[RMDB]
The record gives the reactivity of an RNA of 177 nucleotides to DMS and 2A3. The DMS profile rests on 1,606 reads. For 2A3 the reverse transcriptase was SuperScript II with manganese. For 2A3, 3,117 sequencing reads were counted.
RNA sequence: GGGAACGACUCGAGUAGAGUCGAAAAGAUAUGGAGCAUCAUGGGUUCAACAGCUAGCUCGGAAACGAGCUAGACAUGAACGCCAUAUGCUCCUAAGUCAAAAGGUAUCAACUUCGGUUGAUACCAACUGUAACCUUUCGUUCGCGAAAGGUUACAGAAAAGAAACAACAACAACAAC
Reactivity to DMS in 0.01 (KOAc 150mM, MgCl2 10mM, bicine 150mM(pH8.5), 24C), signal-to-noise 2, nucleotides 027 to 126: g050a000u000a300u020g000g000a000g000c000a000u000c300a000u000g000g010g000u000u000c000a050a120c300a300g000c000u000a000g010c000u010c000g030g000a110a080a250c000g000a010g000c000u020a000g040a030c130a180u000g000a000a000c000g030c010c010a000u000a030u000g010c000u000c000c000u000a010a050g020u010c060a080a070a090a190g000g020u000a000u000c000a010a010c000u000u020c220g010g000u010u000g000a030u000a000c000c000a020a010
Reactivity to 2A3 in 0.01 (KOAc 150mM, MgCl2 10mM, bicine 150mM(pH8.5), 24C), signal-to-noise 2, nucleotides 027 to 126: g020a010u080a030u210g000g000a000g020c000a030u120c070a020u140g080g000g000u030u050c040a150a110c020a160g040c000u020a010g000c020u000c000g020g020a120a140a040c010g000a010g000c000u010a000g010a010c000a040u080g000a000a020c040g170c070c000a000u030a000u010g000c000u000c000c000u010a010a020g030u000c060a020a050a090a150g000g010u010a000u020c000a000a010c000u030u140c300g160g000u010u030g010a000u000a020c020c010a000a020